[RMDB]
Background:
The data come from the RNA Mapping Database (RMDB), library OK1LIB. Structure probing data (DMS and 2A3) for a 177-nucleotide construct. For 2A3 the reverse transcriptase was SuperScript II with manganese. In probing experiments dimethyl sulfate is read out at A N1 and C N3, which are open when not base-paired.

RNA sequence: GGGAACGACUCGAGUAGAGUCGAAAACUUUUUUUUUCUUCUCGGUUCUUACUGGUGGAGACGGGUGUCAAGGUAUGAGUGUGUGACGGGGGUCUUGAUAAAUAGGAGCUCCUAGCGAGGUGAUACGCCAUGCUGCUAGAUUCGUCUAGCAGCAUGGAAAAGAAACAACAACAACAAC
Reactivity to DMS in 0.01 (KOAc 150mM, MgCl2 10mM, bicine 150mM(pH8.5), 24C), signal-to-noise 2, nucleotides 027 to 126: c000u000u000u000u000u000u010u010u000u000c010u000u000c050u000c030g000g100u030u000c040u000u010a040c060u020g050g010u020g010g000a090g070a050c070g010g000g000u000g000u040c040a040a030g000g030u010a080u010g030a060g000u010g000u010g000u000g000a070c080g000g000g000g000g000u000c020u010u000g010a160u050a010a030a080u030a080g000g000a080g010c030u020c020c010u010a080g030c100g000a090g010g010u000g000a120u010a120c140g000
Reactivity to 2A3 in 0.01 (KOAc 150mM, MgCl2 10mM, bicine 150mM(pH8.5), 24C), signal-to-noise 3, nucleotides 027 to 126: c060u130u070u040u050u010u010u020u160u110c030u020u050c050u010c020g080g000u090u020c030u010u110a150c010u070g100g020u030g010g020a100g010a020c010g040g000g030u080g050u030c050a040a050g020g000u070a080u220g060a090g040u050g010u020g010u070g010a060c110g040g000g010g000g030u010c000u000u060g000a000u040a170a120a060u160a040g030g010a070g010c060u020c020c000u000a020g070c020g030a000g040g030u080g010a020u030a180c060g010
Conditions: 150 mM KOAc, 10 mM MgCl2 and 150 mM bicine (pH 8.5), 24 C.